[RMDB]
Chemical mapping of a 207-nucleotide RNA with 2A3 and DMS. The 2A3 profile rests on 1,535 reads. The RNA was probed in 150 mM KOAc, 10 mM MgCl2 and 150 mM bicine (pH 8.5) at 24 C. For DMS the reverse transcriptase was MarathonRT. Reactivities are rounded to 0.1 and cut off at 0 and 3.
RNA sequence: GGGAACGACUCGAGUAGAGUCGAAAAGCACAAAUCCACAAACGCCAACGAUGAGCGUUUCGCUGUAGCCGCUUAAGGCAACAGCCGGGGCCGCCUGAGCCCUGUUACCAAAGACGGCUGGCGGGGGUAAUUACUUAUUGCUUCGGCAAUAAGUAAACAAAAUAAGUGCUUUCGAGCACUUAUUUUGAAAAGAAACAACAACAACAAC
Reactivity to 2A3 in 0.01 (KOAc 150mM, MgCl2 10mM, bicine 150mM(pH8.5), 24C), signal-to-noise 2, nucleotides 027 to 156: g040c000a000c020a080a100a020u070c060c010a070c090a100a050a000c040g010c010c010a100a080c180g190a230u160g050a090g060c010g010u020u070u070c050g000c000u020g010u050a070g010c000c020g050c200u190u200a230a120g000g000c000a010a010c000a000g000c000c000g020g000g000g020c010c040g000c030c040u030g020a020g000c010c000c000u020g020u040u110a040c000c000a000a060a000g020a000c040g000g000c030u020g040g000c070g010g000g000g000g010u030a050a060u100u010a020c000u000u000a000u000u000g030c020u030u030c160g080g000c000a000a000u000a000a000g000u000a000a000a010
Reactivity to DMS in 0.01 (KOAc 150mM, MgCl2 10mM, bicine 150mM(pH8.5), 24C), signal-to-noise 2, nucleotides 027 to 156: g000c040a030c060a020a050a050u000c010c020a110c060a050a040a050c060g030c000c000a040a120c140g010a180u020g010a080g030c010g000u000u000u000c020g040c040u000g030u000a070g070c010c000g010c160u000u010a130a160g010g040c050a030a000c010a070g030c010c020g020g020g020g010c010c040g010c080c050u010g000a160g000c000c030c000u000g000u000u000a100c050c010a050a230a220g000a100c140g010g040c010u000g030g020c000g010g010g050g040g010u000a050a080u000u000a010c000u010u000a000u000u000g010c030u000u000c300g030g030c000a000a020u000a010a020g010u000a010a030a190